[RMDB]
RNA sequence: GGGAACGACUCGAGUAGAGUCGAAAAGACGCCUUUAGAAGAAGAGGCUAGGGGGUAUUCCGGUGUGGGAUACUUAGUAAUUUGCAACGCUAAUUGCAUAAGAUUGUAGGACGGAAUUUACAGUCUUUAGAGAUAAGCACGUUCGCGUGCUUAUCAAGGGAAAUACUAGAUUCGUCUAGUAUUUCCCAAAAGAAACAACAACAACAAC
Reactivity to DMS in 0.01 (KOAc 150mM, MgCl2 10mM, bicine 150mM(pH8.5), 24C), signal-to-noise 3, nucleotides 027 to 156: g020a110c070g010c020c010u010u010u000a150g020a150a200g000a140a130g000a070g010g020c020u000a060g020g030g030g020g000u000a070u000u000c020c030g040g020u000g030u000g000g000g010a030u000a030c020u000u010a080g020u020a080a100u000u000u000g020c040a060a130c120g030c110u010a090a110u000u010g000c010a130u000a060a070g000a050u000u000g020u000a050g030g000a210c050g020g010a090a300u010u000u000a030c020a040g010u000c010u000u000u010a090g040a180g000a010u010a000a040g020c000a030c000g030u000u000c300g030c030g060u010g020c020u000u000a000u000c000a060a150
Reactivity to 2A3 in 0.01 (KOAc 150mM, MgCl2 10mM, bicine 150mM(pH8.5), 24C), signal-to-noise 6, nucleotides 027 to 156: g050a020c050g010c020c010u060u050u100a210g030a290a010g020a070a010g020a040g010g010c020u030a080g030g050g000g000g010u040a030u030u020c030c010g110g080u210g040u140g040g020g000a020u030a090c010u010u020a020g020u050a040a110u060u030u070g020c040a100a060c080g000c070u060a040a050u070u030g000c010a050u030a080a010g020a030u030u070g040u050a020g030g080a020c060g020g050a060a040u070u090u060a060c040a020g010u010c000u030u040u080a120g020a000g000a050u000a000a000g000c000a000c010g010u020u050c150g020c000g090u000g000c000u000u000a000u000c000a000a020

An RNA of 207 nucleotides, treated with DMS and 2A3 and read out base by base.
DMS adducts were read by reverse transcription with MarathonRT.
The 2A3 profile rests on 6,836 reads.
For DMS, 4,650 sequencing reads were counted.